[RMDB]
RNA sequence: GGGAACGACUCGAGUAGAGUCGAAAAAACGACCAUAUGGAGGACAAGACUCCUGUAACAAAAUGGACAGACAUUCCCUAUCUAGGAAAAAGGGAGGACUUAUGGUGUGGAUCCCUUAUAGGGCACAUCUCCAGUGCCGUUUCGACGGCACUGGAGAAAAAGAAACAACAACAACAAC
Reactivity to DMS in 0.01 (KOAc 150mM, MgCl2 10mM, bicine 150mM(pH8.5), 24C), signal-to-noise 1, nucleotides 027 to 126: a000a000c110g000a030c000c000a110u000a050u020g000g000a010g000g000a220c210a090a060g080a260c000u000c000c000u000g010u000a130a020c290a060a020a130a140u010g000g000a100c040a000g030a170c090a230u070u000c040c020c000u000a070u000c060u000a220g000g000a110a030a150a170a050g000g000g000a030g000g000a110c050u000u000a030u050g000g010u050g020u010g000g000a150u000c000c000c000u000u000a120u060a050g030g000g000c140a070c080a060
Reactivity to 2A3 in 0.01 (KOAc 150mM, MgCl2 10mM, bicine 150mM(pH8.5), 24C), signal-to-noise 1, nucleotides 027 to 126: a000a000c280g020a090c000c000a000u000a000u020g050g060a000g000g000a000c170a140a110g000a000c000u030c000c000u000g050u120a020a020c000a050a300a000a050u220g100g020a000c000a000g080a060c040a020u040u040c000c000c000u000a000u000c020u000a000g040g070a020a020a020a020a020g110g050g000a120g000g000a000c000u110u230a290u150g040g000u000g030u060g080g000a020u050c000c000c000u010u050a300u250a060g070g080g000c000a000c000a080